Conditions: 150 mM KOAc, 10 mM MgCl2 and 150 mM bicine (pH 8.5), 24 C. This 177-nucleotide RNA was probed chemically with DMS and 2A3. DMS adducts were read by reverse transcription with MarathonRT. It was measured as part of the RMDB library M2PK90. For 2A3, 6,246 sequencing reads were counted.
RNA sequence: GGGAACGACUCGAGUAGAGUCGAAAAGUUAUGGAAAACGUCUUAGCUACCACUACAACAACAAUGCUGCACGGUGAUGGUUCGACUUACUCGAAACCAUCACGUAGUGGUAGUCGUUCCCAUUCAACAUUCGUGGAUAGUUCGCUAUCCACGAAUGAAAAGAAACAACAACAACAAC
Reactivity to DMS in 0.01 (KOAc 150mM, MgCl2 10mM, bicine 150mM(pH8.5), 24C), signal-to-noise 4, nucleotides 027 to 126: g010u010u010a100u000g020g010a070a060a080a050c060g010u020c110u010u000a120g020c000u000a000c020c000a010c010u010a050c040a120a090c130a050a090c180a080a100u020g010c120u000g000c100a090c160g000g020u000g010a000u000g000g000u000u000c000g000a030c300u000u000a080c280u000c000g000a030a020a040c000c000a010u000c030a000c040g010u010a010g030u000g000g010u000a020g010u010c040g000u000u000c010c000c010a180u000u010c080a050a130
Reactivity to 2A3 in 0.01 (KOAc 150mM, MgCl2 10mM, bicine 150mM(pH8.5), 24C), signal-to-noise 4, nucleotides 027 to 126: g030u060u050a080u210g140g070a080a170a000a010c030g080u040c060u090u090a010g010c010u000a000c010c000a010c010u020a010c000a140a010c000a060a010c020a140a260u190g100c070u120g020c140a040c150g060g010u000g010a010u010g000g010u010u000c000g000a050c060u130u200a090c050u060c010g010a060a030a040c010c000a000u000c000a000c010g000u010a010g000u000g000g000u000a000g000u000c000g000u000u020c000c000c000a010u100u090c010a040a070